This 177-nucleotide RNA was probed chemically with DMS and 2A3. High 2A3 reactivity points to a flexible backbone, as in loops and unpaired stretches. The reactions ran in a buffer of 150 mM KOAc, 10 mM MgCl2 and 150 mM bicine (pH 8.5), at 24 C. For 2A3 the reverse transcriptase was SuperScript II with manganese. For 2A3, 1,198 sequencing reads were counted. The data come from the RNA Mapping Database (RMDB), library OK2TST.

RNA sequence: GGGAACGACUCGAGUAGAGUCGAAAAUCAAGUCUGCUGAUGAAUUCUUGGAAAAAUUAUCUGAUUACGAUAAAGAUUUGACUCAAUUGAAGAAGGAAGCUGCCACUGAAAAUAAGGUAUUGAGAUAUGCUAAUUACGUAUUCGUACGUAAUUAGCAAAAAGAAACAACAACAACAAC
Reactivity to DMS in 0.01 (KOAc 150mM, MgCl2 10mM, bicine 150mM(pH8.5), 24C), signal-to-noise 5, nucleotides 027 to 126: u010c030a040a200g010u010c050u000g020c030u000g010a060u000g010a120a120u000u000c040u000u010g000g010a020a050a090a100a100u010u000a030u000c010u000g010a150u010u010a090c140g000a070u010a050a100a080g000a150u000u010u000g010a120c030u000c040a070a060u010u000g010a070a080g010a070a040g010g020a080a090g010c070u000g010c050c050a070c050u000g000a050a040a060a080u010a050a050g000g010u000a070u000u000g010a060g000a110u010a070
Reactivity to 2A3 in 0.01 (KOAc 150mM, MgCl2 10mM, bicine 150mM(pH8.5), 24C), signal-to-noise 2, nucleotides 027 to 126: u040c000a030a040g060u050c040u060g030c040u080g010a070u040g050a110a110u090u000c020u080u100g010g040a050a110a060a150a120u090u020a030u000c010u000g080a250u250u090a030c040g000a000u040a060a100a030g050a040u050u060u100g010a050c030u010c080a090a110u030u100g060a040a060g000a000a010g070g030a050a000g040c000u080g000c030c030a040c060u080g060a080a030a020a140u100a090a020g060g030u110a060u050u180g030a100g020a060u130a020